Conditions: 150 mM KOAc, 10 mM MgCl2 and 150 mM bicine (pH 8.5), 24 C. This 177-nucleotide RNA was probed chemically with 2A3 and DMS. 2A3 adducts were read by reverse transcription with SuperScript II with manganese. For DMS, 1,574 sequencing reads were counted. The 2A3 profile rests on 6,253 reads. DMS adducts were read by reverse transcription with MarathonRT. Source: RMDB library OK1LIB, as collected in RNAgym.
[RMDB]
RNA sequence: GGGAACGACUCGAGUAGAGUCGAAAACGCCAGCACAUAAACCCUGUCUUCCGGAGGCAUGUAGCAGAACACGUGUCCAUGAUUGGAAACCCAGACCUCGGGCGACUGUGCCGCUUGGGGCGAACACGUCUUCGAUAAUCUUCGGAUUAUCGAAGACAAAAGAAACAACAACAACAAC
Reactivity to 2A3 in 0.01 (KOAc 150mM, MgCl2 10mM, bicine 150mM(pH8.5), 24C), signal-to-noise 7, nucleotides 027 to 126: c050g030c020c010a010g040c030a030c010a040u260a090a150a120c010c020c020u040g050u070c020u090u040c030c050g040g030a040g030g020c030a020u070g030u080a040g040c090a060g040a120a030c050a010c070g060u040g030u010c020c010a050u100g040a160u140u170g050g020a070a050a040c010c000c000a030g050a220c020c010u000c010g010g010g000c010g030a050c050u090g050u120g080c010c000g010c010u020u020g010g000g010g010c020g010a040a020c040a010c120
Reactivity to DMS in 0.01 (KOAc 150mM, MgCl2 10mM, bicine 150mM(pH8.5), 24C), signal-to-noise 1, nucleotides 027 to 126: c130g000c080c000a050g000c000a040c000a050u000a110a110a150c090c050c000u020g020u020c020u010u000c020c000g030g070a100g010g010c030a020u000g070u000a080g000c070a140g000a060a080c160a090c020g000u000g030u000c000c000a060u020g000a180u030u000g000g000a100a090a060c000c000c000a040g000a110c090c000u000c000g000g000g020c010g000a000c050u000g000u050g000c040c000g000c070u000u040g010g000g000g000c020g010a070a010c170a070c300